Conditions: 150 mM KOAc, 10 mM MgCl2 and 150 mM bicine (pH 8.5), 24 C. Chemical mapping of a 207-nucleotide RNA with 2A3 and DMS. Reactivities are rounded to 0.1 and cut off at 0 and 3. For 2A3 the reverse transcriptase was SuperScript II with manganese. It was measured as part of the RMDB library OK3TST.
[RMDB]
RNA sequence: GGGAACGACUCGAGUAGAGUCGAAAAGGCGAUAGAGAGGCCCUCUCAUUAAUGCGGAGAUGUCACGCUGACAGAAUGAUAUUAGAUGUCCGCUUCCGGUUGCAUCGCGGCGAUGAUUACAUAGGACAUCGAUUACCCAUUCGCUUCGGGGAAGCAACCACUCAGCAUUAUUCGUAAUGCUGAGUGGAAAAGAAACAACAACAACAAC
Reactivity to 2A3 in 0.01 (KOAc 150mM, MgCl2 10mM, bicine 150mM(pH8.5), 24C), signal-to-noise 3, nucleotides 027 to 156: g030g000c030g030a030u110a070g130a050g010a030g060g000c020c000c020u040c010u020c020a060u080u190a130a060u170g030c030g000g020a060g010a020u080g060u080c060a030c070g030c050u080g060a030c010a040g110a070a040u070g050a040u030a030u150u110a110g010a030u020g010u020c010c030g010c000u110u020c040c020g080g000u080u050g030c030a040u080c040g010c050g080g000c050g030a040u020g020a040u030u240a090c080a110u100a090g020g020a000c000a010u010c000g000a000u000u080a030c000c020c020a010u040u030c020g020c000u040u050c030g060g010g000g000a020a000g020c020a010a010
Reactivity to DMS in 0.01 (KOAc 150mM, MgCl2 10mM, bicine 150mM(pH8.5), 24C), signal-to-noise 2, nucleotides 027 to 156: g000g020c030g020a150u010a050g000a150g000a170g010g010c070c070c010u000c030u000c050a130u010u010a080a080u000g020c040g000g000a120g030a080u000g030u000c040a100c070g010c050u000g020a130c100a140g010a040a070u000g010a050u000a080u000u000a090g000a050u000g000u000c030c010g000c060u000u000c040c020g020g010u010u010g030c030a150u010c070g020c060g010g000c020g020a040u000g000a120u000u000a090c060a130u010a110g020g010a020c010a040u000c010g000a090u000u000a100c050c000c040a200u010u000c090g000c020u000u000c090g070g000g060g000a040a030g000c030a110a290